RNA sequence: GGGAACGACUCGAGUAGAGUCGAAAAUUAGUGAAAAAUUGUUUGUGCGUAGUAAGGAAGAAGACGGAUUUGCCUUCUACCCUGCUUGCACUAAUGGUCAUGCUGUACCGACUCUCUUUAGACUUAACAAUAAACAUGGCUUCGGCCAUGUUUAUUGAAAAGAAACAACAACAACAAC
Reactivity to 2A3 in 0.01 (KOAc 150mM, MgCl2 10mM, bicine 150mM(pH8.5), 24C), signal-to-noise 1, nucleotides 027 to 126: u070u000a020g020u030g110a180a040a000a000a110u100u080g010u010u000u030g010u000g000c000g000u010a000g000u020a010a090g010g000a000a000g000a000a000g000a000c060g100g070a230u080u090u300g020c000c000u030u000c000u000a000c000c000c020u000g000c000u020u010g000c010a000c010u000a010a000u020g030g020u020c010a030u240g030c000u030g020u050a130c020c000g030a030c000u010c000u000c000u060u020u040a020g030a050c010u070u080a080a020
Reactivity to DMS in 0.01 (KOAc 150mM, MgCl2 10mM, bicine 150mM(pH8.5), 24C), signal-to-noise 2, nucleotides 027 to 126: u000u000a050g010u000g000a060a080a100a110a030u000u000g010u000u000u000g000u000g010c000g000u000a010g010u000a020a020g020g000a210a040g010a010a010g010a040c000g000g010a200u010u010u010g010c000c000u000u000c000u010a070c010c000c000u000g000c000u000u000g000c010a010c000u000a010a010u010g010g020u000c070a130u020g000c040u000g000u010a090c190c010g000a040c020u000c010u000c030u000u000u000a110g000a150c030u000u000a030a290
Background: The record gives the reactivity of an RNA of 177 nucleotides to 2A3 and DMS. Source: RMDB library 15KREP, as collected in RNAgym. The reactions ran in a buffer of 150 mM KOAc, 10 mM MgCl2 and 150 mM bicine (pH 8.5), at 24 C.